Source: RMDB library ARCHII, as collected in RNAgym. The record gives the reactivity of an RNA of 207 nucleotides to 2A3. The reactions ran in a buffer of 150 mM KOAc, 10 mM MgCl2 and 150 mM bicine (pH 8.5), at 24 C. The 2A3 profile rests on 988 reads. For 2A3 the reverse transcriptase was SuperScript II with manganese.
[RMDB]
RNA sequence: GGGAACGACUCGAGUAGAGUCGAAAAGUCGGUCAAUGGGCUGUGUGGCGAAAGCCACCGCAACGUCAUCUUACAUUGACUGGUUUCCUACCGGGUUACUUGGCAGGAAAUAAGACUUAAGGUAACUGGUUUCCAAAAGGCCUGUUGGUCGGCAUGACUCUUUAUGGGACUUCGGUCCCAUAAAGAGAAAAGAAACAACAACAACAAC
Reactivity to 2A3 in 0.01 (KOAc 150mM, MgCl2 10mM, bicine 150mM(pH8.5), 24C), signal-to-noise 2, nucleotides 027 to 156: g020u020c000g000g000u010c000a010a010u010g030g050g000c050u080g010u020g010u000g160g000c000g040a080a030a010g010c000c000a010c020c010g010c050a100a040c020g070u010c010a050u040c030u080u110a060c030a130u070u080g080a040c010u010g010g040u000u040u020c000c000u040a040c000c000g100g000g000u130u140a090c030u110u090g060g000c060a020g000g110a090a030a030u130a020a010g030a010c010u070u040a040a020g030g000u020a040a000c000u040g110g060u030u040u090c060c000a060a100a020a040g030g000c000c010u020g030u010u010g000g020u000c000g000g010c020a020u060g020a020